[RMDB]
Chemical mapping of a 207-nucleotide RNA with 2A3.
RNA sequence: GGGAACGACUCGAGUAGAGUCGAAAAUGAACUAUAAUUGUUCAUUGAAGUCAUUGAUGCAAACUCCUUGGUCACACACACAUACGGCGCGGAAGGCGUGUUUGCUGACGUUUCCAUUCCCUUGUUUCAAUCAUUGGUUAAUCCCUUGAUUCCUUUGCGUGUACAGGUACUUCGGUACCUGUACACGAAAAGAAACAACAACAACAAC
Reactivity to 2A3 in 0.01 (KOAc 150mM, MgCl2 10mM, bicine 150mM(pH8.5), 24C), signal-to-noise 2, nucleotides 027 to 156: u000g000a000a010c040u080a080u300a300a280u220u130g000u000u000c010a000u000u030g010a090a030g000u050c050a060u070u190g040a060u180g000c030a000a080a050c020u030c000c010u020u030g090g000u130c020a010c000a000c000a020c000a010c040a140u060a150c250g040g030c010g020c020g130g090a010a020g030g020c110g030u050g020u070u000u010g000c050u030g030a030c020g000u030u050u000c020c010a050u070u000c000c000c000u000u060g040u070u030u000c000a070a050u010c020a040u000u050g030g050u060u140a090a080u150c060c060c000u030u060g080a070u130u170c000c000u050u100u110g040
For 2A3, 721 sequencing reads were counted. The reactions ran in a buffer of 150 mM KOAc, 10 mM MgCl2 and 150 mM bicine (pH 8.5), at 24 C. It was measured as part of the RMDB library PDB130.